[RMDB]
RNA sequence: GGGAACGACUCGAGUAGAGUCGAAAACAUACUUAAACUUGCCUGAAGAAAUGAAUCCAUUCUUAGGUUACCGUGCGAUUCGUUUAUGCCUUGCGCAACAAGAUAUUUUCAGACCACAGCUACGUGCCUUAGCACCCUACUUCGGUAGGGUGCUAAGAAAAGAAACAACAACAACAAC
Reactivity to 2A3 in 0.01 (KOAc 150mM, MgCl2 10mM, bicine 150mM(pH8.5), 24C), signal-to-noise 2, nucleotides 027 to 126: c000a000u210a050c030u140u130a130a080a090c000u030u100g000c000c020u080g070a060a050g030a060a040a000u100g030a010a030u050c040c020a010u060u140c060u080u080a090g010g000u090u050a080c060c000g020u010g070c090g070a020u010u080c030g000u010u050u120a060u120g060c020c000u070u080g000c050g030c030a050a100c040a060a070g040a010u060a080u140u040u030u080c040a030g030a070c040c000a030c000a070g020c000u110a060c060g090u090g050c000
Reactivity to DMS in 0.01 (KOAc 150mM, MgCl2 10mM, bicine 150mM(pH8.5), 24C), signal-to-noise 2, nucleotides 027 to 126: c110a130u000a080c150u000u000a080a050a140c060u000u000g020c050c000u020g000a030a050g000a070a120a080u000g020a040a060u010c020c050a130u000u000c100u000u020a080g010g040u010u000a060c100c100g020u000g000c090g000a020u000u000c060g000u020u000u000a070u000g010c050c050u000u020g010c150g010c150a020a130c070a040a050g010a120u020a080u000u010u000u000c010a090g010a090c070c040a030c090a110g040c040u000a050c130g030u000g000c160